Structure probing data (DMS and 2A3) for a 207-nucleotide construct. For DMS, 2,140 sequencing reads were counted. For 2A3, 1,197 sequencing reads were counted. Conditions: 150 mM KOAc, 10 mM MgCl2 and 150 mM bicine (pH 8.5), 24 C.
[RMDB]
RNA sequence: GGGAACGACUCGAGUAGAGUCGAAAAGAAGGCGGCGCUCUUGUGGUCAUCCAGGUAGUUUCGCACCGCAAACACCACUGUGUAGCACAGCACCACCCUGAGCCGCGACCAGUAGUCGUAGUGGUCGUUGUACACUGCGCGCAGGACGCUGAUGAUGAUCUUACGCAGUGUUCGCACUGCGUAAGAUAAAAGAAACAACAACAACAAC
Reactivity to DMS in 0.01 (KOAc 150mM, MgCl2 10mM, bicine 150mM(pH8.5), 24C), signal-to-noise 1, nucleotides 027 to 156: g060a090a080g040g030c030g000g010c060g010c040u000c030u010u000g020u150g000g010u000c040a160u000c150c060a130g060g000u030a060g000u010u000u000c090g010c070a110c010c000g010c000a150a060a090c060a050c010c020a090c000u000g000u000g000u000a130g010c050a090c040a080g000c040a070c010c010a050c050c110c000u010g000a060g020c030c090g090c050g000a140c020c000a190g020u000a170g050u000c040g040u000a050g040u000g030g050u000c020g000u040u010g050u000a170c000a050c020u010g030c000g020c020g040c010a090g020g000a090c040g020c020u010g030a130u000g020a200u000g050
Reactivity to 2A3 in 0.01 (KOAc 150mM, MgCl2 10mM, bicine 150mM(pH8.5), 24C), signal-to-noise 2, nucleotides 027 to 156: g110a030a020g120g020c020g000g000c050g020c070u030c010u070u060g010u130g000g000u040c020a030u040c030c080a080g090g030u080a060g020u080u020u090c140g020c070a110c030c070g010c070a030a040a010c040a020c020c010a020c060u040g000u010g090u230a030g080c100a030c030a070g000c030a050c000c000a030c010c000c020u010g060a030g040c000c040g020c010g020a010c030c000a010g030u100a010g090u120c020g010u050a000g020u020g050g000u020c060g010u040u030g030u000a030c050a010c040u020g010c030g000c020g000c050a030g060g010a010c060g000c030u040g010a100u040g040a030u120g030